[RMDB]
RNA sequence: GGGAACGACUCGAGUAGAGUCGAAAAGAGAUCGGCGCGGACGGAGUCCUCGCCAACCUGGUCAGGGCCGAGAGGCAGCAGCCACAACGAGAUCACCUCUGGGUCGUCUGCCGGUCUCCACCUCAUUUUAAAACGGGAGAGGGUUCGCCCUCUCCCGACAUACGUAGUAGUUCGCUACUACGUAUGUAAAAGAAACAACAACAACAAC
Reactivity to 2A3 in 0.01 (KOAc 150mM, MgCl2 10mM, bicine 150mM(pH8.5), 24C), signal-to-noise 4, nucleotides 027 to 156: g010a000g000a010u010c000g000g010c010g020c020g020g000a010c000g030g000a020g050u020c000c010u000c010g070c070c020a020a060c010c060u030g000g010u120c010a020g000g010g020c010c010g080a060g010a040g090g000c000a010g000c000a000g010c010c010a030c060a040a020c010g010a000g010a040u090c070a050c060c000u000c010u070g190g060g190u050c020g020u030c110u170g020c010c000g000g010u000c000u000c000c000a040c000c000u130c030a100u110u130u140u290a050a080a010a010c000g000g010g010a010g000a000g000g020g020u050u100c180g100c010c010c000u010c000u000c000c000c000g000
Reactivity to DMS in 0.01 (KOAc 150mM, MgCl2 10mM, bicine 150mM(pH8.5), 24C), signal-to-noise 1, nucleotides 027 to 156: g020a080g020a040u000c020g040g130c020g000c050g030g050a020c010g000g020a090g020u010c060c000u000c000g010c020c060a040a020c050c040u000g000g000u000c140a280g010g010g000c000c010g020a280g010a300g000g030c000a110g050c050a220g000c010c000a070c060a180a040c020g000a040g000a060u000c030a090c160c010u000c010u000g020g000g060u000c020g010u000c000u050g040c030c040g020g000u000c000u000c010c030a120c030c020u010c090a110u010u010u010u030a050a010a050a160c000g000g030g000a030g010a040g000g010g040u000u000c050g020c000c000c010u000c000u000c000c010c000g000
Background: Chemical mapping of a 207-nucleotide RNA with 2A3 and DMS. It was measured as part of the RMDB library ARCHII. Values are in units of 0.01, from 0 to 300, in steps of 10. The DMS profile rests on 2,415 reads.